[RMDB]
RNA sequence: GGGAACGACUCGAGUAGAGUCGAAAAGCGAGGGUCGCUUGGAGGUGGGGGACCAGUGGAGCCAUGGGAUGCCCUUCCCGAUUCCGUCCAUCCCUUCCCCCUGAGGGUCGCCCAGGAAUGGCGGGACGUACGAGGAAAUGUUCGCAUUUCCUCGUACAAAAGAAACAACAACAACAAC
Reactivity to DMS in 0.01 (KOAc 150mM, MgCl2 10mM, bicine 150mM(pH8.5), 24C), signal-to-noise 1, nucleotides 027 to 126: g000c110g020a070g000g000g000u000c050g020c030u020u000g010g020a160g000g000u000g010g000g000g010g000a060c080c030a040g010u020g010g010a020g040c070c060a140u000g020g000g000a110u000g010c020c010c010u000u000c010c000c010g020a230u010u000c020c020g030u010c000c010a040u010c000c010c010u000u000c000c000c000c010c050u010g000a110g010g010g000u000c080g000c000c010c000a090g000g010a050a030u000g010g010c030g000g000g000a080c230
Reactivity to 2A3 in 0.01 (KOAc 150mM, MgCl2 10mM, bicine 150mM(pH8.5), 24C), signal-to-noise 1, nucleotides 027 to 126: g030c000g010a050g130g090g090u160c050g020c140u060u080g090g030a140g000g050u100g030g010g020g000g020a000c050c000a030g090u070g170g030a030g060c020c100a150u070g040g000g040a050u120g050c010c030c000u060u030c030c010c000g000a080u120u030c020c010g010u070c010c000a020u040c000c000c060u010u050c050c000c000c010c040u030g070a190g050g000g000u070c010g010c020c020c000a000g020g060a080a040u060g000g020c010g000g010g000a030c120
Structure probing data (DMS and 2A3) for a 177-nucleotide construct. The RNA was probed in 150 mM KOAc, 10 mM MgCl2 and 150 mM bicine (pH 8.5) at 24 C. For DMS the reverse transcriptase was MarathonRT. 2A3 adducts were read by reverse transcription with SuperScript II with manganese. It was measured as part of the RMDB library VIROID. The 2A3 profile rests on 1,061 reads.